RNA sequence: GGGAACGACUCGAGUAGAGUCGAAAACAGGCGUGUCGGCUGCAAAGGAAGUUUGGGUGGACGAGCCGCCUUCCGCUCUCGGCAGCGUAUCUCGAAUACUUUCCCGUUGGUGGGACCUUAGGCGCGGUCUUGUGAGCCGGUUCGCUGGUUCGCAAGAAAAAGAAACAACAACAACAAC
Reactivity to DMS in 0.01 (KOAc 150mM, MgCl2 10mM, bicine 150mM(pH8.5), 24C), signal-to-noise 1, nucleotides 027 to 126: c100a070g000g020c020g000u000g000u000c030g000g000c010u000g000c030a090a100a140g020g000a000a300g010u000u020u020g010g010g000u010g000g010a070c080g010a100g010c040c010g000c040c000u010u020c020c030g010c050u010c060u000c120g020g000c070a040g010c050g000u010a050u000c020u000c010g000a300a300u000a300c130u000u010u010c040c000c010g060u010u010g000g020u020g000g000g000a070c070c020u010u010a020g010g010c040g020c030g000g000
Reactivity to 2A3 in 0.01 (KOAc 150mM, MgCl2 10mM, bicine 150mM(pH8.5), 24C), signal-to-noise 2, nucleotides 027 to 126: c020a000g020g030c020g020u140g040u080c030g070g040c000u000g020c040a090a090a030g090g060a060a130g060u000u130u060g070g010g000u060g020g040a020c010g020a030g020c010c010g010c010c000u010u040c000c000g040c000u000c000u010c000g060g000c030a040g000c000g020u060a130u030c100u050c080g000a300a140u220a300c000u060u070u060c000c010c000g020u010u070g010g010u120g000g020g020a020c000c000u030u060a010g010g020c010g010c000g020g000
This 177-nucleotide RNA was probed chemically with DMS and 2A3. High DMS reactivity at an A or C suggests that its Watson-Crick edge is free. The 2A3 profile rests on 2,356 reads. Source: RMDB library OK1LIB, as collected in RNAgym.